An RNA of 177 nucleotides, treated with 2A3 and DMS and read out base by base. Source: RMDB library M2PK50, as collected in RNAgym. As a SHAPE reagent, 2A3 marks flexible, mostly unpaired nucleotides at the ribose 2'-OH. For 2A3 the reverse transcriptase was SuperScript II with manganese.

[RMDB]
RNA sequence: GGGAACGACUCGAGUAGAGUCGAAAAGUGCACGACUUCGGUCGUGCACAAAUAAAGGCAGUCGAGUGCGUACGGCACAGUCAUACGCUGACGCCACGAGAAAAAGUAACGUCUUCGGACGUUACAAUCAACAUGUCUGGUUCGCCAGACAUGUUGAAAAAGAAACAACAACAACAAC
Reactivity to 2A3 in 0.01 (KOAc 150mM, MgCl2 10mM, bicine 150mM(pH8.5), 24C), signal-to-noise 2, nucleotides 027 to 126: g020u000g020c010a020c010g020a010c020u040u070c280g030g000u000c000g050u010g030c020a000c030a010a000a010u010a010a010a020g020g050c060a030g010u010c040g110a080g250u180g060c010g010u030a020c010g000g000c060a050c050a300g020u020c000a010u020a030c020g000c000u050g020a000c010g000c040c000a050c030g170a170g120a020a090a050a010a030g000u010a000a000c000g000u000c010u060u070c300g110g010a020c000g000u000u000a010c000a000a020
Reactivity to DMS in 0.01 (KOAc 150mM, MgCl2 10mM, bicine 150mM(pH8.5), 24C), signal-to-noise 2, nucleotides 027 to 126: g000u000g020c010a000c000g000a020c010u000u010c210g040g030u000c020g010u000g000c010a000c000a000a050a090u000a070a070a130g010g010c010a110g010u000c000g010a120g050u000g000c000g010u000a030c080g000g000c000a090c150a130g020u000c010a050u000a020c030g000c010u000g020a050c030g000c020c010a110c170g000a130g010a090a070a090a070a120g010u000a000a000c000g020u000c000u000u010c160g010g000a000c000g000u000u000a000c010a050a070